Conditions: 150 mM KOAc, 10 mM MgCl2 and 150 mM bicine (pH 8.5), 24 C. This 177-nucleotide RNA was probed chemically with DMS and 2A3. For 2A3, 2,572 sequencing reads were counted.
RNA sequence: GGGAACGACUCGAGUAGAGUCGAAAAGGGAAAAAGUUCGCUUUUUCCCAAAUAAAAUCAGCGGUUAAAAAGCUCCGCUUAUAACGGCUGAAGCGGAGCUUAAAAGUGAGGUGUUCGCACCUCACAAUCAUAACAGUGAGUUCGCUCACUGUUAUGAAAAAGAAACAACAACAACAAC
Reactivity to DMS in 0.01 (KOAc 150mM, MgCl2 10mM, bicine 150mM(pH8.5), 24C), signal-to-noise 3, nucleotides 027 to 126: g010g000g010a000a010a010a010a000g000u000u010c220g020c000u000u000u000u000u000c000c000c000a030a070a050u000a030a050a110a110u010c040a050g000c070g010g010u000u010a060a090a100a060a000g010c000u000c020c010g010c000u010u000a070u010a100a060c060g000g020c040u000g000a060a030g020c000g000g010a030g020c020u000u000a010a040a050a120g020u000g010a000g000g020u000g010u000u020c200g020c000a020c000c000u000c000a010c000a040a080
Reactivity to 2A3 in 0.01 (KOAc 150mM, MgCl2 10mM, bicine 150mM(pH8.5), 24C), signal-to-noise 2, nucleotides 027 to 126: g000g010g010a000a010a000a000a010g010u050u070c130g100c050u000u010u020u000u000c000c000c010a020a020a000u030a000a010a000a060u040c020a020g070c030g150g080u080u130a150a120a080a030a000g000c000u010c000c000g020c020u000u040a030u010a110a030c030g080g000c080u070g030a000a000g010c000g000g010a010g000c000u010u010a000a000a000a010g010u010g010a000g020g020u050g010u050u100c200g040c080a000c000c010u000c000a010c000a000a000